[RMDB]
RNA sequence: GGGAACGACUCGAGUAGAGUCGAAAAAAAGGAUGUAAAGCAAACUGGGAUCUUUCCAGUAAACAGCUCAGAAGCCUCUGAGAAUAUCAUGGUAUUAAAAUAACAUGGUAUAAUUGAUGUUCAUUUAUGACCUGUAAUCAUGAAUAGGCUAACACCACAAAAUAUUUACGUUCGCGUAAAUAUUUUGAAAAGAAACAACAACAACAAC
Reactivity to DMS in 0.01 (KOAc 150mM, MgCl2 10mM, bicine 150mM(pH8.5), 24C), signal-to-noise 1, nucleotides 027 to 156: a000a060a030g010g020a120u010g020u010a070a070a060g000c040a290a160a070c000u000g010g010g010a090u010c150u010u000u000c000c010a040g000u000a050a080a050c030a130g020c040u000c010a040g020a120a250g010c050c060u000c060u030g000a110g020a160a030u000a010u010c010a030u000g010g000u020a030u020u000a070a110a120a140u000a020a010c010a000u000g000g020u000a020u000a040a120u010u000g010a140u000g010u000u010c090a040u000u000u010a010u010g000a010c020c030u000g000u000a020a030u010c010a000u010g000a010a010u000a120g030g000c010u020a080a110c020a050c000c020a130
Reactivity to 2A3 in 0.01 (KOAc 150mM, MgCl2 10mM, bicine 150mM(pH8.5), 24C), signal-to-noise 3, nucleotides 027 to 156: a000a000a050g040g030a080u120g010u100a080a100a030g020c050a080a070a080c000u000g010g010g030a120u110c110u040u200u020c030c000a020g000u020a020a060a040c050a020g060c000u010c030a050g040a210a060g070c030c070u030c010u010g020a020g010a080a030u020a010u020c000a000u010g000g050u100a070u140u190a250a190a090a160u110a040a020c010a010u010g000g010u020a030u020a020a110u090u110g060a060u080g070u040u080c030a010u030u020u140a060u080g030a050c000c030u060g110u240a100a060u040c010a020u040g040a040a050u040a050g010g000c020u030a030a020c050a040c050c030a040